Structure probing data (DMS and 2A3) for a 177-nucleotide construct. The DMS profile rests on 1,370 reads. The reactions ran in a buffer of 150 mM KOAc, 10 mM MgCl2 and 150 mM bicine (pH 8.5), at 24 C. Source: RMDB library OK2TRN, as collected in RNAgym.

RNA sequence: GGGAACGACUCGAGUAGAGUCGAAAAGCCACAGUGCAGCAGGGGAUCCGAGAUCAUUGUUGGGAUUAGCGGGUCUAUCCGCUCAAUCAGGGGCGAGAAAUACGGUCGCCUCCCUGUGGUCAGCAGAGACUACGACUCUGUUCGCAGAGUCGUAGUCAAAAGAAACAACAACAACAAC
Reactivity to DMS in 0.01 (KOAc 150mM, MgCl2 10mM, bicine 150mM(pH8.5), 24C), signal-to-noise 2, nucleotides 027 to 126: g000c000c010a020c000a040g020u000g040c100a030g030c000a070g030g030g000g030a050u010c070c050g020a170g010a020u010c060a150u010u000g020u020u020g000g000g000a030u000u000a030g030c000g000g020g020u030c170u010a060u020c000c000g000c000u010c080a030a060u000c100a090g030g000g000g000c010g000a030g000a090a050a100u020a160c260g020g000u010c010g000c000c000u000c000c020c000u000g000u010g000g010u010c130a090g010c150a090g010a220
Reactivity to 2A3 in 0.01 (KOAc 150mM, MgCl2 10mM, bicine 150mM(pH8.5), 24C), signal-to-noise 2, nucleotides 027 to 126: g000c000c010a020c000a010g080u040g050c010a030g000c020a020g100g040g060g030a000u000c050c090g070a080g010a070u010c010a060u040u230g120u180u130g170g000g000a020u000u030a050g030c010g000g030g000u000c010u070a120u080c000c000g010c000u020c020a020a030u110c060a030g020g000g000g000c040g020a010g070a040a160a010u300a090c190g110g030u000c000g060c000c000u000c000c000c000u010g000u020g020g000u000c010a000g030c040a010g110a010